[RMDB]
RNA sequence: GGGAACGACUCGAGUAGAGUCGAAAACCGGCUUUCGAGCCGGAGCAAGAUAUGGAAUGACUACCCACCCGUCCCGUCCACCGAAGAACUCGGAAACGAGGGAGGUGGAUCGUGGACGGAGGUCAUUCCUAAGUCGGACAUGGCGGUUCGCCGCCAACCACAGGUUGCUAUUCGUAGCAACCUGUGGAAAAGAAACAACAACAACAAC
Reactivity to 2A3 in 0.01 (KOAc 150mM, MgCl2 10mM, bicine 150mM(pH8.5), 24C), signal-to-noise 2, nucleotides 027 to 156: c000c000g040g030c000u180u030u150c300g090a000g010c000c000g030g020a020g110c120a110a050g100a070u110a120u260g010g020a000a000u000g000a010c020u100a250c060c040c000a000c040c000c010g000u000c040c000c000g000u030c000c000a020c000c000g190a280a080g010a040a070c000u010c010g020g130a140a050a040c020g000a000g000g020g010a030g000g020u000g030g000a030u090c010g030u290g020g000a000c000g000g000a000g000g000u000c000a000u000u000c000c000u010a050a000g080u040c030g010g000a060c080a190u130g000g000c000g030g020u060u120c240g010c080c000g000c000c010a010a010